Structure probing data (DMS and 2A3) for a 177-nucleotide construct.
The DMS profile rests on 1,746 reads.
DMS adducts were read by reverse transcription with MarathonRT.
For 2A3, 2,052 sequencing reads were counted.
The data come from the RNA Mapping Database (RMDB), library OK2TST.
The reactions ran in a buffer of 150 mM KOAc, 10 mM MgCl2 and 150 mM bicine (pH 8.5), at 24 C.
Reactivities are given for positions 27 through 126.
RNA sequence: GGGAACGACUCGAGUAGAGUCGAAAACACUGCUUAAAAAGCCAAGAAAGGACACCGUGACCGUUGGCAAUUGCUCAAUACCACGGAACCAGAGAAAGUAAGCCAACAUAGCGCCCACCACACUCAAAUGGUAUAUUAGCUUCGGCUAAUAUACCAUAAAAGAAACAACAACAACAAC
Reactivity to DMS in 0.01 (KOAc 150mM, MgCl2 10mM, bicine 150mM(pH8.5), 24C), signal-to-noise 3, nucleotides 027 to 126: c070a110c070u010g010c020u000u000a040a050a130a070a120g010c010c040a030a070g000a080a080a090g010g030a080c070a100c060c020g010u000g010a100c060c090g000u010u000g000g010c040a160a100u000u010g000c050u000c060a060a040u000a100c080c030a030c010g000g000a130a120c060c070a070g000a120g000a060a070a060g010u010a050a110g010c040c030a030a050c040a050u000a110g000c070g000c020c030c040a070c070c060a060c110a040c070u010c070a040a100
Reactivity to 2A3 in 0.01 (KOAc 150mM, MgCl2 10mM, bicine 150mM(pH8.5), 24C), signal-to-noise 2, nucleotides 027 to 126: c030a000c060u080g010c010u090u060a100a070a030a040a040g020c030c000a050a050g040a130a150a020g090g020a000c000a000c080c010g020u030g010a060c030c060g020u020u020g010g000c010a020a300u200u140g030c030u020c070a000a060u040a120c050c020a030c020g010g020a020a020c010c020a010g000a000g030a170a070a040g050u090a080a000g030c000c010a010a010c010a040u090a010g070c020g030c010c010c000a010c010c020a040c000a030c040u100c020a030a050